Source: RMDB library OK3TST, as collected in RNAgym. Chemical mapping of a 207-nucleotide RNA with 2A3 and DMS. The 2A3 profile rests on 561 reads. For DMS, 2,205 sequencing reads were counted. 2A3 is a SHAPE reagent: it acylates the 2'-hydroxyl of flexible nucleotides of all four kinds.
RNA sequence: GGGAACGACUCGAGUAGAGUCGAAAAUGUUUUGGGAAGGGAUUGAGCUCAGCAUUCCAGGAAAUAUUUUUUACCUAUUCAUUACUGCAUGCAUAGGCUUACAUUUUCUCAAUUUAAAAAUACUUCUAAAGGGUGGGCUUUUGGGAUGUAGACACAAUAAUAUCCUCCAUUUCGAUGGAGGAUAUUAAAAAGAAACAACAACAACAAC
Reactivity to 2A3 in 0.01 (KOAc 150mM, MgCl2 10mM, bicine 150mM(pH8.5), 24C), signal-to-noise 1, nucleotides 027 to 156: u050g020u020u080u080u070g020g000g010a070a000g040g040g000a010u020u160g030a110g030c040u050c150a030g010c000a040u160u000c060c000a010g040g060a000a120a010u060a090u060u080u020u060u090u090a080c030c000u040a100u020u030c020a060u000u210a140c060u080g060c050a020u010g010c030a000u010a020g000g000c030u060u100a060c020a130u090u060u200u020c030u030c000a040a060u130u150u160a110a120a000a050a000u100a040c020u050u070c080u090a080a040a100g090g030g000u100g000g000g000c020u100u060u060u040g030g020g000a000u050g020u030a030g030a070c010a000c000a100a070
Reactivity to DMS in 0.01 (KOAc 150mM, MgCl2 10mM, bicine 150mM(pH8.5), 24C), signal-to-noise 1, nucleotides 027 to 156: u000g000u020u000u000u000g020g000g000a080a120g020g010g010a150u010u000g020a090g040c000u010c040a220g030c010a040u010u000c030c010a220g000g000a020a050a020u000a010u000u000u000u000u000u000a090c040c020u000a010u000u000c020a030u000u010a170c230u000g030c110a050u010g010c070a080u010a040g030g050c050u010u000a100c070a140u000u000u010u010c050u010c020a070a100u000u000u030a010a050a030a050a050u000a020c020u000u000c070u010a070a040a060g010g000g030u010g000g010g000c040u000u020u000u000g020g020g000a060u000g000u010a120g010a170c120a040c060a030a120